[RMDB]
RNA sequence: GGGAACGACUCGAGUAGAGUCGAAAAGGUGCGAUGAGUCCUAAGGUGGCUCAGGCCAUGCAGACCCUGGAGAAUGUCCGGGGUAACGUGCUCAACGCCCUGAAGCAGGACCGCGCCGCCGGUCGGCUCCAUAGUACGACUUCGGUCGUACUAUGGAAAAAGAAACAACAACAACAAC
Reactivity to 2A3 in 0.01 (KOAc 150mM, MgCl2 10mM, bicine 150mM(pH8.5), 24C), signal-to-noise 3, nucleotides 027 to 126: g050g000u180g040c010g020a040u040g010a000g020u060c010c010u090a130a060g190g040u060g020g000c020u030c130a050g130g000c020c010a010u090g040c010a010g000a170c000c000c000u020g030g050a040g040a260a300u280g080u130c000c000g000g000g000g000u010a000a030c040g020u080g000c010u010c020a020a050c020g020c010c000c010u030g020a070a010g000c030a010g110g110a020c000c000g000c060g010c030c060g050c060c020g020g000u040c030g000g010c020
Reactivity to DMS in 0.01 (KOAc 150mM, MgCl2 10mM, bicine 150mM(pH8.5), 24C), signal-to-noise 4, nucleotides 027 to 126: g010g010u010g030c000g010a120u000g010a030g010u000c130c040u020a120a130g020g010u000g000g010c000u000c210a090g020g010c020c010a020u000g010c070a150g000a050c000c000c000u000g000g000a040g000a220a100u020g020u000c010c000g000g000g020g010u010a000a030c170g000u000g010c000u000c030a020a120c030g000c030c000c000u000g010a070a100g010c040a070g010g000a010c010c010g000c050g000c080c060g010c120c020g000g010u000c010g000g000c040